[RMDB]
RNA sequence: GGGAACGACUCGAGUAGAGUCGAAAAAGAUGGUCUUUACUAAUGAUCAUGCUCACCAGUGAAUUUUAAUGUUCUCCAGAUCACUGUGCAGAAAUACCCACAGAAGUUCAACUGAAGAUGAUGACUCAUCUUCAGGAGAAGAAAUGGAAUGGAGUGAAAUCUUUGGAUGUUUCGACAUCCAAAGAUUAAAAGAAACAACAACAACAAC
Reactivity to DMS in 0.01 (KOAc 150mM, MgCl2 10mM, bicine 150mM(pH8.5), 24C), signal-to-noise 2, nucleotides 027 to 156: a060g010a070u000g020g010u000c000u000u000u010a300c110u010a100a090u020g030a030u000c000a050u000g000c030u000c040a100c040c030a070g000u020g030a050a090u000u010u010u020a070a170u020g000u000u000c020u000c000c000a110g010a150u010c030a050c010u010g010u000g000c040a120g000a080a050a130u000a090c020c040c000a060c080a120g010a090a150g000u000u000c010a020a300c000u000g000a050a020g000a030u000g010a070u020g030a240c300u000c010a010u010c000u000u000c000a010g020g000a190g030a150a110g000a060a080a110u000g000g010a110a120u010g010g000a040g020u000g010a070
Reactivity to 2A3 in 0.01 (KOAc 150mM, MgCl2 10mM, bicine 150mM(pH8.5), 24C), signal-to-noise 2, nucleotides 027 to 156: a000g040a000u000g010g030u030c010u100u250u120a270c180u300a210a120u280g000a000u000c000a010u010g000c000u000c020a030c020c060a000g000u010g020a040a100u060u110u130u300a150a220u150g050u190u010c010u000c000c000a030g000a070u030c000a000c010u000g000u040g000c000a000g070a040a110a060u160a130c000c020c030a070c020a040g230a230a030g080u010u010c010a030a030c000u000g010a010a000g010a000u010g010a020u150g080a060c100u020c040a000u010c000u000u000c000a000g000g000a000g010a000a010g010a040a100a010u080g030g080a050a050u050g000g010a040g050u040g040a050
Source information: This 207-nucleotide RNA was probed chemically with DMS and 2A3. It was measured as part of the RMDB library OK3TST. For 2A3 the reverse transcriptase was SuperScript II with manganese. DMS adducts were read by reverse transcription with MarathonRT. Conditions: 150 mM KOAc, 10 mM MgCl2 and 150 mM bicine (pH 8.5), 24 C.